RNA sequence: GGGAACGACUCGAGUAGAGUCGAAAACCCUGGUUAUUCGUAACCAGGGGUUGAGUGAAUCCUCUCAGUGCAUCGGUGGAUCACACCAAACGCAUGGACGACAAUUACGGUUAUUCGUAACCGUAAAGUCUGAAUACGACUUCGGUCGUAUUCAGACAAAAGAAACAACAACAACAAC
Reactivity to DMS in 0.01 (KOAc 150mM, MgCl2 10mM, bicine 150mM(pH8.5), 24C), signal-to-noise 2, nucleotides 027 to 126: c000c010c000u000g020g000u000u000a000u000u000c110g040u000a000a030c000c000a020g010g000g000g020u000u020g000a150g010u030g020a130a130u000c020c010u010c100u000c020a110g010u000g010c030a040u000c300g000g020u020g000g000a180u010c170a120c040a030c000c000a030a090a150c060g000c020a030u000g000g010a080c080g000a060c070a150a200u000u000a000c000g010g000u000u000a060u000u010c190g010u000a000a000c010c000g000u000a000a010a140
Reactivity to 2A3 in 0.01 (KOAc 150mM, MgCl2 10mM, bicine 150mM(pH8.5), 24C), signal-to-noise 1, nucleotides 027 to 126: c000c020c010u000g000g010u010u010a030u050u090c190g010u020a020a000c020c010a020g040g000g010g010u070u250g050a050g010u180g080a090a110u050c010c000u050c040u030c040a040g060u030g000c020a030u000c120g030g010u050g040g070a190u210c050a020c010a000c100c000a050a080a030c060g000c020a000u060g050g000a030c060g030a040c070a060a080u050u010a010c010g000g000u010u010a030u030u080c110g010u070a000a000c000c000g000u000a010a010a010
An RNA of 177 nucleotides, treated with DMS and 2A3 and read out base by base.